[RMDB]
RNA sequence: GGGAACGACUCGAGUAGAGUCGAAAAGAUAUGGAUUGAACUACUACGACGCCAGCGUUGAAAUCGGAAACGAUGGAGCUGCGCGACCCCGUAGCAAUCCUAAGUCAAAUCCGCGUUCGCGCGGAAAUCCAAUGAGCUUGUUCGCAAGCUCAUUGGAAAAAGAAACAACAACAACAAC
Reactivity to 2A3 in 0.01 (KOAc 150mM, MgCl2 10mM, bicine 150mM(pH8.5), 24C), signal-to-noise 1, nucleotides 027 to 126: g000a020u060a030u220g080g010a000u060u050g040a300a050c030u060a010c000u020a000c300g070a000c000g000c020c000a000g000c000g280u300u100g060a110a090a000u020c020g000g060a060a030a020c030g030a000u000g010g020a040g000c020u000g000c050g010c000g170a080c040c090c010c000g010u000a000g040c020a000a000u010c000c000u020a110a010g040u030c020a050a120a130u000c020c010g000c010g000u030u070c300g050c030g000c040g100g000a060a010a000
Reactivity to DMS in 0.01 (KOAc 150mM, MgCl2 10mM, bicine 150mM(pH8.5), 24C), signal-to-noise 1, nucleotides 027 to 126: g000a020u020a300u010g030g000a000u000u000g000a060a160c010u000a110c000u050a060c130g000a040c010g000c020c020a020g000c010g010u000u000g000a090a220a010u000c020g020g010a200a150a150c020g000a040u020g000g000a130g000c000u000g020c140g020c000g050a020c060c050c260c220g000u000a000g020c010a020a020u000c010c000u000a060a140g060u000c000a030a120a130u000c000c000g000c020g030u000u010c180g010c010g000c000g000g000a020a030a060